[RMDB]
RNA sequence: GGGAACGACUCGAGUAGAGUCGAAAAUGCUAAGGGUUUGAUAUCUGCUAAAACUCGGUGCAUUCAUCAAUGCAGGUUAAGCCAAAGGGAUGUCCCGACCGGAGGCCGACAAUCCAGGGAACCGGAUAAAAGAUUGGUGGGUUCGCCCACCAAUCAAGGUAAGAUUGAAGUUCGCUUCAAUCUUACCAAAAGAAACAACAACAACAAC
Reactivity to DMS in 0.01 (KOAc 150mM, MgCl2 10mM, bicine 150mM(pH8.5), 24C), signal-to-noise 2, nucleotides 027 to 156: u010g040c030u000a300a220g000g010g010u010u000u020g010a120u000a050u000c050u010g000c060u000a160a010a020a060c010u000c020g020g050u000g010c050a030u000u010c080a140u000c070a070a170u020g020c110a020g020g080u000u000a120a040g010c000c040a020a300a300g000g000g020a050u020g010u000c030c000c040g000a090c020c020g010g030a300g000g020c000c040g010a080c020a020a070u000c040c030a030g020g000g000a130a040c050c000g000g010a070u000a060a130a120a160g010a010u000u000g020g000u010g000g040g020u000u000c300g020c000c010c010a000c000c010a010a000u000c000a000a020
Reactivity to 2A3 in 0.01 (KOAc 150mM, MgCl2 10mM, bicine 150mM(pH8.5), 24C), signal-to-noise 2, nucleotides 027 to 156: u130g000c010u040a060a040g010g020g010u010u000u010g010a010u020a010u040c010u020g000c000u030a000a000a010a060c010u000c020g010g050u080g000c030a090u070u210c050a080u110c100a150a190u180g000c000a000g020g020u000u020a020a000g000c000c000a010a010a010g030g010g000a020u030g040u030c000c000c000g000a000c000c000g000g000a020g000g000c000c000g000a000c000a100a090u140c150c080a020g000g010g060a030a060c060c080g080g020a070u090a160a180a000a000g000a000u000u000g010g000u000g010g000g000u040u060c140g090c020c000c000a010c010c000a000a000u000c010a000a000